[RMDB]
An RNA of 207 nucleotides, treated with 2A3 and DMS and read out base by base. DMS adducts were read by reverse transcription with MarathonRT. The RNA was probed in 150 mM KOAc, 10 mM MgCl2 and 150 mM bicine (pH 8.5) at 24 C. For 2A3 the reverse transcriptase was SuperScript II with manganese.
RNA sequence: GGGAACGACUCGAGUAGAGUCGAAAAGUACGACAACUUAUUACGCAUCUUCGUACGAUCGAUGCUAAGAUUAGUGGCGAAAGCCACAAGCACGGGCAUUCAUAGGUCAGAUCCGAGAGGAUUUGACGUCCUAGCCUGUGCAAGACUAGGUCAGACAAAUAUGGUGGAUCUUCGGAUCCACCAUAUUAAAAGAAACAACAACAACAAC
Reactivity to 2A3 in 0.01 (KOAc 150mM, MgCl2 10mM, bicine 150mM(pH8.5), 24C), signal-to-noise 1, nucleotides 027 to 156: g110u130a050c020g030a020c060a030a000c110u070u070a050u230u160a070c090g010c000a010u020c030u080u010c000g180u160a060c090g100a070u030c080g000a030u050g000c000u000a000a000g040a150u100u140a050g020u000g010g000c000g090a060a040a040g000c010c000a000c010a000a000g000c000a000c010g000g000g040c050a070u130u140c000a050u180a240g010g020u000c000a000g000a000u000c000c000g000a010g010a010g040g000a010u000u000u000g000a010c000g010u100c000c010u000a030g010c000c000u010g030u000g000c000a020a020g060a020c070u060a010g000g140u010c090a030g040a250c040a050
Reactivity to DMS in 0.01 (KOAc 150mM, MgCl2 10mM, bicine 150mM(pH8.5), 24C), signal-to-noise 1, nucleotides 027 to 156: g020u000a080c000g020a070c070a030a040c050u000u000a180u000u000a150c200g000c110a050u000c110u010u020c010g080u000a050c050g020a300u000c070g010a120u000g020c000u010a090a200g020a070u020u000a050g010u000g000g090c000g000a180a070a300g030c020c000a000c000a040a110g030c020a030c050g000g000g010c010a170u000u010c070a040u000a120g030g010u020c010a020g000a050u000c000c000g030a290g010a300g000g030a020u000u000u000g010a040c010g010u010c080c070u000a300g010c000c000u060g000u000g000c020a030a100g000a060c030u010a040g000g000u000c030a260g000a090c110a070